[RMDB]
RNA sequence: GGGAACGACUCGAGUAGAGUCGAAAACUCAAUGACUUCGGUCAUUGAGAAAGGACAAAAGUGCAACUGAGCAGCUAUGAGCUCAUACAUCGUCAUAGCAAAAAACACACACGUUCGCGUGUGUGAAUCUAGGGAUACACUUCGGUGUAUCCCUAGAAAAAGAAACAACAACAACAAC
Reactivity to DMS in 0.01 (KOAc 150mM, MgCl2 10mM, bicine 150mM(pH8.5), 24C), signal-to-noise 1, nucleotides 027 to 126: c000u010c000a010a000u010g000a010c000u000u030c180g030g020u000c000a000u010u010g010a010g000a020a090a110g000g000a060c050a020a060a120a090g050u000g050c040a090a030c100u010g010a000g000c000a250g010c000u010a000u000g000a030g000c010u000c000a030u010a050c200a050u000c200g030u020c000a000u000a040g000c040a000a010a050a050a100a080c010a010c000a000c030a000c010g030u000u000c230g050c010g000u000g000u010g010u000g000a050a030

This 177-nucleotide RNA was probed chemically with DMS. It was measured as part of the RMDB library M2PK50. For DMS, 903 sequencing reads were counted. For DMS the reverse transcriptase was MarathonRT.